The record gives the reactivity of an RNA of 177 nucleotides to DMS and 2A3.
High DMS reactivity at an A or C suggests that its Watson-Crick edge is free.
For 2A3, 5,115 sequencing reads were counted.
Conditions: 150 mM KOAc, 10 mM MgCl2 and 150 mM bicine (pH 8.5), 24 C.
For 2A3 the reverse transcriptase was SuperScript II with manganese.
[RMDB]
RNA sequence: GGGAACGACUCGAGUAGAGUCGAAAAUGGACUGCGUUCGCGCAGUCCAAAAGAAUAGACGAACACUAGCGUAGAAGUGUUCAGGUCACAUAACUACCCAAAAAAGCUGAGUGUUCGCACUCAGCAACUAGCCACUAUGAUUCGUCAUAGUGGCUAGAAAAGAAACAACAACAACAAC
Reactivity to DMS in 0.01 (KOAc 150mM, MgCl2 10mM, bicine 150mM(pH8.5), 24C), signal-to-noise 3, nucleotides 027 to 126: u000g010g020a030c000u000g030c000g010u000u000c300g050c010g030c000a030g030u010c000c000a000a000a070a070g000a110a130u000a080g010a050c000g010a010a000c000a000c000u000a090g030c160g050u020a110g000a070a040g010u000g000u000u000c010a050g020g010u010c010a110c190a070u010a090a080c100u000a190c000c010c000a000a030a090a070a100a140g010c000u000g000a000g030u000g000u000u000c230g010c010a010c010u010c000a000g000c020a020a040
Reactivity to 2A3 in 0.01 (KOAc 150mM, MgCl2 10mM, bicine 150mM(pH8.5), 24C), signal-to-noise 4, nucleotides 027 to 126: u050g000g000a000c000u000g000c000g030u020u050c100g000c000g000c080a000g000u000c000c000a000a000a000a010g010a030a050u100a070g010a010c020g000a010a020c010a010c020u040a070g120c050g270u120a060g110a300a010g030u010g010u000u010c020a020g200g020u010c010a020c010a090u090a080a020c040u090a120c030c000c000a040a090a010a010a030a000g000c010u000g000a000g010u000g030u090u120c210g030c070a000c000u000c000a000g000c000a000a000